RNA sequence: GGGAACGACUCGAGUAGAGUCGAAAAGUCACCGACAGGAAACAAUGUGGCGCACUGGCGGCAUUGAUAGCAUCAAUAGCAACUUUGAUAGUGCCAUCGGUACCAUUUUUGAAACCAACUGGGCAAGAGACACUGUGCAAUUCGUUGCACAGUGUCUAAAAGAAACAACAACAACAAC
Reactivity to 2A3 in 0.01 (KOAc 150mM, MgCl2 10mM, bicine 150mM(pH8.5), 24C), signal-to-noise 2, nucleotides 027 to 126: g060u040c020a030c100c010g010a000c030a030g040g030a080a180a000c030a020a050u090g010u030g090g000c100g000c080a010c030u010g030g010c020g000g000c020a010u000u120g070a130u090a050g080c030a040u040c020a020a040u050a070g090c030a030a100c040u070u080u130g060a090u090a040g020u010g020c000c000a020u020c010g000g000u010a030c000c010a020u180u090u030u060u060g100a060a020a020c010c000a030a050c020u000g030g080g000c060a080a010g080
Reactivity to DMS in 0.01 (KOAc 150mM, MgCl2 10mM, bicine 150mM(pH8.5), 24C), signal-to-noise 3, nucleotides 027 to 126: g010u010c080a200c000c030g030a100c150a080g010g000a090a120a130c060a030a060u010g000u000g000g000c070g010c180a060c060u000g000g030c190g000g040c040a010u010u000g030a100u010a120g000c080a300u000c020a020a050u000a070g010c140a150a050c140u000u040u000g020a090u010a030g010u000g020c000c020a040u000c010g040g000u010a070c020c030a080u010u000u000u000u020g000a070a090a160c080c000a060a060c130u000g020g010g000c070a090a070g010
An RNA of 177 nucleotides, treated with 2A3 and DMS and read out base by base. Source: RMDB library OK2TST, as collected in RNAgym. The DMS profile rests on 1,460 reads. The 2A3 profile rests on 1,962 reads. The RNA was probed in 150 mM KOAc, 10 mM MgCl2 and 150 mM bicine (pH 8.5) at 24 C.